[RMDB]
RNA sequence: GGGAACGACUCGAGUAGAGUCGAAAACAAGGUCGACGUGGGCAAGGUCGUCGAGCACUUCUCCAGGCGUUGCCGUGCGGUGCGCGUGGUGCCGUUCGACCCACACCUCGAAGAAGGCGCCGAAAUCGUUCUAAGUCACCUUCGGGUGACUUAGAACAAAAGAAACAACAACAACAAC
Reactivity to 2A3 in 0.01 (KOAc 150mM, MgCl2 10mM, bicine 150mM(pH8.5), 24C), signal-to-noise 2, nucleotides 027 to 126: c030a040a090g010g010u030c010g040a040c010g040u090g020g010g020c070a030a000g030g000u030c010g010u010c010g000a030g030c030a000c050u210u110c050u090c080c040a020g050g070c010g090u120u270g030c060c020g030u220g100c220g050g030u070g010c010g010c040g060u040g000g000u030g010c000c000g020u070u010c020g000a000c000c000c030a010c010a000c010c010u020c010g050a050a050g070a050a030g060g000c080g040c030c010g040a070a050a040u110c070
Reactivity to DMS in 0.01 (KOAc 150mM, MgCl2 10mM, bicine 150mM(pH8.5), 24C), signal-to-noise 2, nucleotides 027 to 126: c140a130a100g020g030u000c020g020a070c090g000u000g020g000g020c080a160a070g000g040u000c050g010u000c010g010a070g010c040a050c080u000u000c110u020c100c110a100g000g000c030g070u000u030g060c030c010g010u050g010c150g020g040u000g020c020g000c080g030u000g010g020u020g020c080c030g020u000u020c000g030a010c030c010c080a080c220a120c030c020u000c060g030a030a110g030a140a110g000g000c090g000c010c000g020a050a140a080u000c090
This 177-nucleotide RNA was probed chemically with 2A3 and DMS.
The data come from the RNA Mapping Database (RMDB), library OK2TRN.
For DMS, 1,038 sequencing reads were counted.
DMS adducts were read by reverse transcription with MarathonRT.
The RNA was probed in 150 mM KOAc, 10 mM MgCl2 and 150 mM bicine (pH 8.5) at 24 C.